[RMDB]
RNA sequence: GGGAACGACUCGAGUAGAGUCGAAAAGGAUUGUACGCCUAACUUCUGUGCUAGAUGCAAAUACCAUCAGGCAUUUUGGGUCAUGGGACUAUGUUUUGAGAUCCAGACACAGUUUGCCAUUGGGGUACGCGAAAUAUUAGUUCGCUAAUAUUUCGCGAAAAGAAACAACAACAACAAC
Reactivity to DMS in 0.01 (KOAc 150mM, MgCl2 10mM, bicine 150mM(pH8.5), 24C), signal-to-noise 6, nucleotides 027 to 126: g010g010a090u000u010g000u010a060c140g010c030c000u010a100a150c120u000u000c070u000g020u010g000c020u000a070g010a100u010g010c090a060a080a150u000a070c060c000a040u010c070a300g000g010c010a010u000u000u020u000g020g000g010u000c010a100u010g020g000g000a050c020u000a070u010g010u000u010u000u000g010a050g010a050u000c020c010a040g000a020c030a020c010a010g010u010u000u000g000c000c010a170u000u010g000g010g000g000u010a050
Reactivity to 2A3 in 0.01 (KOAc 150mM, MgCl2 10mM, bicine 150mM(pH8.5), 24C), signal-to-noise 5, nucleotides 027 to 126: g030g030a100u140u180g050u160a020c110g050c010c000u040a070a090c040u110u030c030u090g110u060g030c020u070a070g010a190u110g070c040a050a070a090u070a060c010c020a050u120c050a020g000g020c000a010u010u030u040u040g030g000g020u010c150a270u080g050g010g010a000c020u040a050u300g270u080u210u090u120g080a060g000a050u020c000c000a000g010a000c010a010c000a020g010u030u030u020g000c020c000a010u070u130g000g000g020g010u030a040